[RMDB]
RNA sequence: GGGAACGACUCGAGUAGAGUCGAAAAAACAGUAAAACCUCUGAAAUUCGCUGACGGCCCAAUCAGCACCCGAGCCCCCCGCCCCCAUGAUGAACCGGGCGAGCUCCUCCUUCAGGUGCGGCAGGAGCCAGUGGACCAUAUUCGUAUGGUCCACUGGAAAAGAAACAACAACAACAAC
Reactivity to 2A3 in 0.01 (KOAc 150mM, MgCl2 10mM, bicine 150mM(pH8.5), 24C), signal-to-noise 2, nucleotides 027 to 126: a000a000c080a040g040u120a070a030a060a110c020c010u010c020u070g100a140a130a110u210u190c050g000c020u040g040a070c020g130g030c000c000c000a000a030u050c010a030g030c010a040c000c010c010g010a010g000c000c010c000c000c000c000g010c000c000c000c010c060a100u170g000a040u040g000a060a030c010c010g020g040g030c040g010a000g000c000u000c000c000u010c010c000u040u110c100a110g050g030u040g090c000g010g000c000a000g040g000a010g040
Reactivity to DMS in 0.01 (KOAc 150mM, MgCl2 10mM, bicine 150mM(pH8.5), 24C), signal-to-noise 2, nucleotides 027 to 126: a080a070c160a100g000u010a050a050a090a040c050c030u000c010u010g040a040a060a050u000u030c100g030c000u000g000a050c040g000g000c010c020c000a070a140u000c080a050g030c040a110c050c030c040g000a090g030c010c000c010c000c010c030g010c020c000c000c020c070a120u030g000a130u050g000a100a190c100c090g010g000g000c020g040a130g010c030u000c010c060u010c000c020u010u000c090a080g030g010u020g000c060g000g000c070a010g010g030a040g010